[RMDB]
RNA sequence: GGGAACGACUCGAGUAGAGUCGAAAAUCGGUAAGAUACAUGACAGCUGCACAGCAUCACUUCACGCGCUGUCAUCGGAUGUCUAGAACAUUCCUUCUAAGAAUAGCCACUGAAGAGUCUAUAAAGAGCAACCAGAAGAGUUCGCUCUUCUGGUUGCAAAAGAAACAACAACAACAAC
Reactivity to 2A3 in 0.01 (KOAc 150mM, MgCl2 10mM, bicine 150mM(pH8.5), 24C), signal-to-noise 2, nucleotides 027 to 126: u090c000g010g020u050a030a020g020a030u020a060c030a020u010g000a030c030a000g150c000u300g000c000a010c000a030g120c060a090u170c010a050c060u110u050c090a030c050g000c000g000c020u030g000u000c000a030u000c010g000g030a070u000g000u000c020u020a030g030a070a070c020a000u000u150c010c000u020u020c020u050a040a070g040a120a050u010a010g040c010c000a010c000u030g070a120a030g050a050g000u020c010u050a140u010a190a080a000g100a000
Reactivity to DMS in 0.01 (KOAc 150mM, MgCl2 10mM, bicine 150mM(pH8.5), 24C), signal-to-noise 1, nucleotides 027 to 126: u000c180g010g000u010a080a000g010a010u010a090c020a000u000g080a000c020a010g000c010u020g130c030a100c180a010g000c210a000u100c060a130c140u000u010c100a070c160g010c090g000c000u040g000u000c000a070u000c170g000g000a040u000g030u010c030u000a110g000a070a070c300a080u000u060c070c000u000u020c060u000a100a010g000a130a020u000a000g000c030c000a040c130u000g000a000a000g040a180g000u000c000u020a060u040a060a080a120g010a200